[RMDB]
RNA sequence: GGGAACGACUCGAGUAGAGUCGAAAAAAAAGAUAUGGAGGAAGGAACUACGAGCAAUGCUGGCGAAGAACGUAUAUCGGAAACGAUAUACGGGAGCCAGUGACUCGCCUUCCUCCUAAGUCAAAAACAUUAGACAUUGGUUCGCCAAUGUCUAAUGAAAAGAAACAACAACAACAAC
Reactivity to 2A3 in 0.01 (KOAc 150mM, MgCl2 10mM, bicine 150mM(pH8.5), 24C), signal-to-noise 2, nucleotides 027 to 126: a000a010a010a050g040a030u070a030u090g020g000a000g010g020a000a010g030g000a090a050c180u220a070c300g010a000g000c070a130a130u300g050c000u000g000g020c030g150a300a010g010a050a000c000g000u000a000u000a010u000c010g000g000a020a020a030c010g000a010u000a000u000a020c020g010g010g010a000g000c000c000a000g000u040g030a020c000u000c000g030c020c000u000u010c010c000u000c000c000u000a010a000g000u000c000a000a030a030a090a090
Reactivity to DMS in 0.01 (KOAc 150mM, MgCl2 10mM, bicine 150mM(pH8.5), 24C), signal-to-noise 4, nucleotides 027 to 126: a060a050a110a110g000a010u000a130u010g000g010a010g010g000a030a010g000g020a140a030c130u020a300c030g010a010g010c130a090a090u010g020c020u000g000g020c000g020a070a180g000a110a220c010g000u000a020u000a010u000c000g000g000a020a030a080c000g010a020u000a000u000a000c000g000g000g000a050g020c010c000a010g010u000g010a040c000u000c000g000c010c000u000u000c000c000u000c000c000u000a000a030g000u020c000a070a060a060a130a160